[RMDB]
RNA sequence: GGGAACGACUCGAGUAGAGUCGAAAAGAAUCAUCAAAUCUUUGAACGCACAUUGCGCCCUCUGGUAUUCCAGGGGGCAUGCCUGUUUGAGCGUCAUUUCUCUCUCAAACCUUUGGGUUUGGUAGUGAGUGAUACUCGUUUUUCGGGUUAACUUGAACUCCCCAUAAGGGUUCGCCCUUAUGGGGAGAAAAGAAACAACAACAACAAC
Reactivity to 2A3 in 0.01 (KOAc 150mM, MgCl2 10mM, bicine 150mM(pH8.5), 24C), signal-to-noise 1, nucleotides 027 to 156: g010a000a020u110c100a000u060c150a130a130a010u020c070u100u180u210g110a090a070c050g040c020a110c030a180u060u300g010c020g000c000c000c020u000c000u030g000g060u170a200u300u130c020c030a030g000g030g020g000g000c000a000u020g000c000c000u110g000u050u070u080g020a020g000c020g060u000c000a000u190u300u010c060u000c000u000c000u000c000a000a000a000c000c000u150u150u300g150g000g000u020u020u020g000g000u020a030g040u000g010a000g010u000g000a000u000a130c000u070c020g080u060u130u000u040u140c030g000g000g000u060u030a170a050c010u000u020g010a100a090
Chemical mapping of a 207-nucleotide RNA with 2A3.
Conditions: 150 mM KOAc, 10 mM MgCl2 and 150 mM bicine (pH 8.5), 24 C.
Values cover nucleotides 27 to 156.